[RMDB]
RNA sequence: GGGAACGACUCGAGUAGAGUCGAAAAGGGGUCACCAACGAAUUGCAUUCACACCCUACCAGCAUGGAGCCAACAGCCCUACUGAAGCCUCCACGGUAGGGACAUGGCUCCAUGCUGGUAGGGUGUGACAUGCAACUAUUGGUGACGGAGGCACCCAUCAAUAAGGGAACUUCGGUUCCCUUAUUGAAAAAGAAACAACAACAACAAC
Reactivity to DMS in 0.01 (KOAc 150mM, MgCl2 10mM, bicine 150mM(pH8.5), 24C), signal-to-noise 1, nucleotides 027 to 156: g020g000g000g020u000c000a020c010c010a020a030c050g000a040a120u000u010g020c020a080u000u000c010a030c020a010c000c000c000u000a040c000c000a020g000c000a010u020g000g030a070g010c000c000a060a070c080a200g010c010c000c010u010a030c010u000g020a130a160g030c030c010u000c010c070a300c080g030g030u000a010g030g020g020a000c010a210u000g020g030c000u000c010c020a000u000g000c020u000g000g010u000a000g020g010g010u000g000u000g010a020c080a000u000g000c000a000a000c030u010a090u000u000g040g010u000g020a020c020g030g030a060g040g020c070a300c000c000c020a300
The data come from the RNA Mapping Database (RMDB), library RNAMAK. An RNA of 207 nucleotides, treated with DMS and read out base by base. The RNA was probed in 150 mM KOAc, 10 mM MgCl2 and 150 mM bicine (pH 8.5) at 24 C. Values cover nucleotides 27 to 156.